[RMDB]
RNA sequence: GGGAACGACUCGAGUAGAGUCGAAAAAGGGCACCGGUGAGGUUCCCUACGUCACUGCUGAAAAUCAGGAGGGGGCUAGAAACUGGAUGGGCGUACACUCACCAAGGCGGCAUCAGUUCAGUUGACCGUCCCGUAUAGGUUUCGACCUAUACGGGACAAAAGAAACAACAACAACAAC
Reactivity to 2A3 in 0.01 (KOAc 150mM, MgCl2 10mM, bicine 150mM(pH8.5), 24C), signal-to-noise 3, nucleotides 027 to 126: a000g070g020g040c110a040c040c030g000g000u180g060a110g010g000u000u040c020c000c000u000a020c000g010u010c020a030c040u040g010c000u060g050a070a070a000a120u150c030a020g000g030a040g000g020g020g000g000c000u020a020g160a070a140a050c010u020g030g000a050u050g070g020g030c010g010u020a070c070a010c020u030c000a040c000c020a040a050g070g000c000g000g000c020a030u010c010a050g050u090u040c020a020g020u040u060g030a060c010c060
Reactivity to DMS in 0.01 (KOAc 150mM, MgCl2 10mM, bicine 150mM(pH8.5), 24C), signal-to-noise 2, nucleotides 027 to 126: a040g000g000g000c010a070c030c020g000g090u050g030a220g000g010u000u010c000c000c000u000a020c100g000u000c120a080c140u000g000c050u000g000a060a070a040a140u020c090a060g010g010a080g020g000g000g040g010c000u020a040g000a030a030a070c060u010g010g000a020u010g010g000g000c030g000u010a130c170a220c020u020c070a030c050c040a050a150g000g000c000g020g030c000a030u010c100a080g010u020u020c030a050g000u000u070g030a160c090c100